[RMDB]
RNA sequence: GGGAACGACUCGAGUAGAGUCGAAAAUGAGGAGUAUUCUGAUGACUCUAAUGUUGUUGUAGCCAAAAUCGAUGCAACUGAAAAUGAUAUAUCGGUCUCUAUUUCUGGCUUCCCUACUAUUAUGUUCUUUAAAGCUAAUGACAAAGUAAACCCUGUAAUUACCCGUAGGAUUCGUCCUACGGGUAAUAAAAGAAACAACAACAACAAC
Reactivity to DMS in 0.01 (KOAc 150mM, MgCl2 10mM, bicine 150mM(pH8.5), 24C), signal-to-noise 1, nucleotides 027 to 156: u000g000a190g020g010a050g060u010a070u010u020c070u020g000a170u010g040a060c030u010c030u010a130a210u000g000u000u010g000u010u000g020u030a070g010c030c020a070a070a100a080u000c050g000a050u000g010c030a080a140c060u000g010a020a100a110a180u000g000a150u000a120u010a070u000c020g020g030u000c030u010c050u000a060u020u000u000c030u000g020g020c050u000u000c010c010c000u000a120c080u000a080u000u020a050u010g030u000u000c030u010u000u000a070a060a140g010c020u030a090a060u000g010a120c040a050a080a190g000u010a040a080a050c080c070c020u000g010u010a120